[RMDB]
RNA sequence: GGGAACGACUCGAGUAGAGUCGAAAAACACUCGAACACUCACGAACGUGUACGAACGUACGAUCUCGAGUGAGAGAUCGAUCACUCGAGUGUGAGUUCGAUCUCGUGUGAGAACGUACACACGAUCACACACGUGAGUUCUCACGUGUGUGAUCACAUAUCUCAGAGCGUUCGCGCUCUGAGAUAUAAAAGAAACAACAACAACAAC
Reactivity to DMS in 0.01 (KOAc 150mM, MgCl2 10mM, bicine 150mM(pH8.5), 24C), signal-to-noise 1, nucleotides 027 to 156: a060c050a020c050u000c030g020a090a210c060a110c030u000c000a160c010g000a120a100c060g060u000g010u000a150c000g000a170a130c090g040u000a080c040g010a080u000c000u010c000g010a060g040u030g010a060g000a080g020a070u000c010g010a110u000c050a010c020u000c020g030a160g000u000g040u000g000a050g030u000u000c000g000a080u000c020u020c000g020u000g000u010g010a080g000a120a120c040g010u010a050c050a150c110a060c140g000a060u000c000a000c000a020c000a010c000g010u010g000a040g000u000u000c110u000c010a020c010g000u010g020u000g030u000g000a000u000c010a060c150
Reactivity to 2A3 in 0.01 (KOAc 150mM, MgCl2 10mM, bicine 150mM(pH8.5), 24C), signal-to-noise 4, nucleotides 027 to 156: a000c050a010c030u060c050g030a060a010c090a050c080u120c040a050c060g130a230a020c110g010u040g040u140a040c010g020a090a030c060g020u140a000c020g030a090u020c000u000c020g030a050g070u110g050a030g010a010g000a040u090c040g040a060u040c030a000c020u040c020g050a080g030u080g070u070g020a090g030u050u020c020g020a130u000c000u000c010g100u100g000u060g010a030g020a030a010c020g030u130a000c090a000c020a010c080g000a000u000c000a000c000a000c000a000c000g000u010g020a020g050u160u060c060u010c030a000c000g030u000g000u000g000u000g000a000u000c000a000c000